[RMDB]
RNA sequence: GGGAACGACUCGAGUAGAGUCGAAAAGCUAUGGUGCAACUCUUUAAGGCAAUAACGAACUAAUUCUAAGCAAGUAAUGGAGAAAUGCCAGGGUCACUAUCUAGCCAUAAUACUGCUUGACAGUAUGAGAAUCUGCUACCCUUCGGGGUAGCAGAAACUACACACAUAAGUUCGCUUAUGUGUGUAGAAAAGAAACAACAACAACAAC
Reactivity to DMS in 0.01 (KOAc 150mM, MgCl2 10mM, bicine 150mM(pH8.5), 24C), signal-to-noise 3, nucleotides 027 to 156: g010c020u000a040u000g020g020u000g010c030a080a070c040u000c010u000u010u000a080a080g030g020c010a060a080u000a130a110c010g010a110a120c050u010a060a140u000u000c040u010a090a170g010c060a050a130g020u000a050a130u010g000g000a120g010a080a090a140u000g010c010c010a130g010g020g000u010c030a030c040u000a030u000c040u000a030g000c020c020a080u010a070a030u000a030c000u000g020c030u000u000g010a140c010a020g010u010a040u000g000a180g000a100a090u000c010u000g010c010u000a010c000c000c000u000u020c300g040g010g020g030u000a020g010c000a010g010a000a010a070
Reactivity to 2A3 in 0.01 (KOAc 150mM, MgCl2 10mM, bicine 150mM(pH8.5), 24C), signal-to-noise 5, nucleotides 027 to 156: g020c010u010a010u060g010g000u020g010c040a100a070c020u030c060u030u160u200a140a080g010g000c030a060a110u120a160a030c050g050a040a030c060u060a070a080u150u050c040u150a150a030g080c060a090a030g100u150a090a090u160g040g030a070g020a090a140a010u040g000c020c000a010g000g020g000u050c000a000c010u020a030u120c040u030a010g020c000c010a010u050a080a000u010a020c000u010g030c030u140u160g080a130c020a000g010u010a020u050g060a090g040a050a070u010c000u000g010c000u000a000c010c000c000u000u050c220g030g010g000g000u000a000g000c000a010g000a000a000a000

The data come from the RNA Mapping Database (RMDB), library M2RFPK. Structure probing data (DMS and 2A3) for a 207-nucleotide construct. For 2A3, 3,923 sequencing reads were counted. The RNA was probed in 150 mM KOAc, 10 mM MgCl2 and 150 mM bicine (pH 8.5) at 24 C.